This 177-nucleotide RNA was probed chemically with DMS and 2A3.
For 2A3 the reverse transcriptase was SuperScript II with manganese.
Conditions: 150 mM KOAc, 10 mM MgCl2 and 150 mM bicine (pH 8.5), 24 C.

RNA sequence: GGGAACGACUCGAGUAGAGUCGAAAAAUUCAGACAUCCCGCAACCUGCGAUUAUCGCAAGGUCAAGGCAAAGUCCGGUAAUGGCGUUCUGAAUACCAGAGAUAAUUCUCUGGCGAAACCCACCUUACUCUUCUCAUUUAUUCGUAAAUGAGAAGAGAAAAGAAACAACAACAACAAC
Reactivity to DMS in 0.01 (KOAc 150mM, MgCl2 10mM, bicine 150mM(pH8.5), 24C), signal-to-noise 7, nucleotides 027 to 126: a080u000u000c010a000g000a050c300a140u020c180c150c030g000c050a050a020c010c000u010g000c000g020a220u020u030a100u020c010g030c010a040a070g010g020u000c030a120a100g010g020c090a120a110a160g020u030c010c000g000g020u000a050a030u010g010g000c040g000u020u000c000u000g000a030a010u000a160c010c000a000g000a010g010a100u010a100a130u020u010c000u000c000u000g000g010c180g000a070a120a070c010c000c000a120c170c060u010u000a170
Reactivity to 2A3 in 0.01 (KOAc 150mM, MgCl2 10mM, bicine 150mM(pH8.5), 24C), signal-to-noise 9, nucleotides 027 to 126: a000u010u000c000a000g020a020c030a140u150c070c040c010g000c010a010a000c000c000u000g010c010g080a120u140u160a170u300c000g000c050a090a110g000g000u000c040a120a130g000g000c070a300a160a020g030u090c010c000g010g010u030a010a020u040g100g000c010g010u040u010c000u000g000a010a010u020a040c000c000a000g010a000g000a010u090a190a170u300u020c000u000c000u000g000g000c010g030a040a020a020c000c000c000a030c020c010u020u060a050

The data come from the RNA Mapping Database (RMDB), libraries RFM100 and RFMREP.